RNA sequence: GGGAACGACUCGAGUAGAGUCGAAAAGGAUGCUGAAACAUGUACGCAACAGCCGAGGCCUAAGCAGCACUCUGAAUGUGGGUGUCAACAAGAAGAGGGGCCUUCGAACUCCACCCAAAAGUCACAAGUAAGGCCAGCAAAAUAGGAGGGAGAAAGGUCCCUACCAACUUUUCGAAGUUGGUAGGGAAAAAGAAACAACAACAACAAC
Reactivity to 2A3 in 0.01 (KOAc 150mM, MgCl2 10mM, bicine 150mM(pH8.5), 24C), signal-to-noise 1, nucleotides 027 to 156: g050g010a000u050g000c030u040g110a000a120a030c050a120u200g050u220a060c110g000c060a000a090c020a070g000c010c000g000a010g010g030c000c000u060a090a020g020c060a000g020c000a010c000u050c040u110g110a230a160u200g020u110g020g050g000u030g040u070c020a000a030c030a120a000g080a020a010g010a080g040g000g000g000c000c050u010u010c000g000a010a000c000u000c000c010a010c020c000c000a000a170a000a000g050u050c000a020c010a050a090g090u120a020a010g070g000c070c000a040g040c100a070a060a010a020u080a120g020g000a000g060g000g010a040g000a030a020a000g070g010
Reactivity to DMS in 0.01 (KOAc 150mM, MgCl2 10mM, bicine 150mM(pH8.5), 24C), signal-to-noise 1, nucleotides 027 to 156: g050g020a060u000g000c010u080g000a100a130a090c040a060u010g000u010a010c050g020c020a070a110c090a090g030c000c030g000a120g000g040c000c060u010a120a140g000c070a140g050c020a050c060u000c060u010g010a090a060u030g000u010g020g060g020u010g040u010c110a030a110c070a070a170g020a100a090g000a070g020g010g000g000c040c040u000u000c030g000a120a110c020u010c030c000a140c000c000c050a040a110a040a070g000u010c060a070c080a090a170g090u030a080a060g010g000c010c020a090g000c070a020a020a050a120u000a130g000g020a090g040g020g010a220g000a060a030a050g120g060

Structure probing data (2A3 and DMS) for a 207-nucleotide construct. For DMS the reverse transcriptase was MarathonRT. For 2A3, 958 sequencing reads were counted. The RNA was probed in 150 mM KOAc, 10 mM MgCl2 and 150 mM bicine (pH 8.5) at 24 C. The data come from the RNA Mapping Database (RMDB), library OK3TST.